[RMDB]
RNA sequence: GGGAACGACUCGAGUAGAGUCGAAAACAGCACCUGGUGAGAUGGAUGGUGUUGGUAUUUGGUCGAUGGGCGGGGCUAUCGACGAUGACUCUGAGACUGCAUAUGCGUGGAGAGAUAAGUCAUAUCUUAUUCUCAUCGAGGCUGCAUGGGAGGACCAGUUAUACAUUUCAUUCGUGAAAUGUAUAACAAAAGAAACAACAACAACAAC
Reactivity to DMS in 0.01 (KOAc 150mM, MgCl2 10mM, bicine 150mM(pH8.5), 24C), signal-to-noise 3, nucleotides 027 to 156: c040a110g000c040a080c010c000u010g020g020u020g000a100g000a100u000g010g020a090u010g010g000u000g030u000u010g030g000u000a050u000u010u010g020g030u000c040g010a080u010g030g000g030c060g010g000g020g010c020u000a040u000c040g020a070c040g020a070u000g000a100c030u000c030u010g000a220g000a090c040u000g020c030a140u000a070u000g020c080g020u000g000g010a120g010a080g010a070u000a020a070g020u020c130a120u000a090u000c010u010u000a070u000u000c010u000c010a090u010c050g020a090g030g020c020u000g000c020a080u000g000g030g000a130g010g000a090c020c030a180
Reactivity to 2A3 in 0.01 (KOAc 150mM, MgCl2 10mM, bicine 150mM(pH8.5), 24C), signal-to-noise 9, nucleotides 027 to 156: c020a010g030c020a020c020c010u060g030g040u090g050a100g010a050u070g050g030a030u030g020g020u030g010u030u050g010g010u080a140u060u080u130g090g000u020c030g020a030u030g010g020g030c050g030g000g000g000c010u030a020u060c020g020a020c020g020a060u110g040a020c020u000c030u050g030a040g030a110c020u040g020c050a070u110a070u280g050c040g030u100g030g030a040g000a000g000a030u020a060a010g040u050c060a070u030a030u190c010u030u050a060u200u050c020u000c010a130u060c040g030a030g000g040c040u030g000c020a050u060g020g000g020a040g000g030a040c010c020a000
Background
Conditions: 150 mM KOAc, 10 mM MgCl2 and 150 mM bicine (pH 8.5), 24 C. This 207-nucleotide RNA was probed chemically with DMS and 2A3. 2A3 adducts were read by reverse transcription with SuperScript II with manganese. Reactivities are rounded to 0.1 and cut off at 0 and 3. For DMS the reverse transcriptase was MarathonRT. Values cover nucleotides 27 to 156. As a SHAPE reagent, 2A3 marks flexible, mostly unpaired nucleotides at the ribose 2'-OH. It was measured as part of the RMDB library OK3TST.